[RMDB]
RNA sequence: GGGAACGACUCGAGUAGAGUCGAAAAUGGACGACUUGGAUGUCGUGCAGGGUGUGUCCAGCGUGAUACGACUGGAAGGAACCGGCUUAUGACCGUCCCGCCGACGGCCACUCACCAGCCGUGGCCGGAUGUAAACGCAGUUCGCUGCGUUUACAUCAAAAGAAACAACAACAACAAC
Reactivity to DMS in 0.01 (KOAc 150mM, MgCl2 10mM, bicine 150mM(pH8.5), 24C), signal-to-noise 9, nucleotides 027 to 126: u000g010g000a040c000g000a010c020u000u010g010g010a100u010g020u000c010g030u000g010c020a050g020g010g010u010g010u010g010u000c000c010a020g010c030g010u010g000a200u010a300c040g000a100c010u000g010g000a050a080g000g000a140a120c090c020g000g000c030u000u000a110u000g010a080c040c020g000u000c010c010c070g010c130c090g000a250c020g010g010c000c010a010c040u000c080a130c100c100a110g000c090c140g010u000g010g010c010c050g010
Reactivity to 2A3 in 0.01 (KOAc 150mM, MgCl2 10mM, bicine 150mM(pH8.5), 24C), signal-to-noise 8, nucleotides 027 to 126: u100g030g030a010c020g010a010c060u090u170g300g110a190u190g180u010c000g010u010g040c010a020g040g000g040u070g000u030g040u030c010c000a010g010c010g030u130g190a160u130a300c060g220a270c100u020g000g030a020a020g040g040a040a050c040c000g000g010c040u250u210a170u270g080a080c000c010g030u030c010c000c000g020c040c040g070a070c010g010g000c010c000a010c000u060c020a100c050c050a020g070c050c020g000u000g000g000c010c000g030
The data come from the RNA Mapping Database (RMDB), library OK2TRN. An RNA of 177 nucleotides, treated with DMS and 2A3 and read out base by base. For 2A3 the reverse transcriptase was SuperScript II with manganese.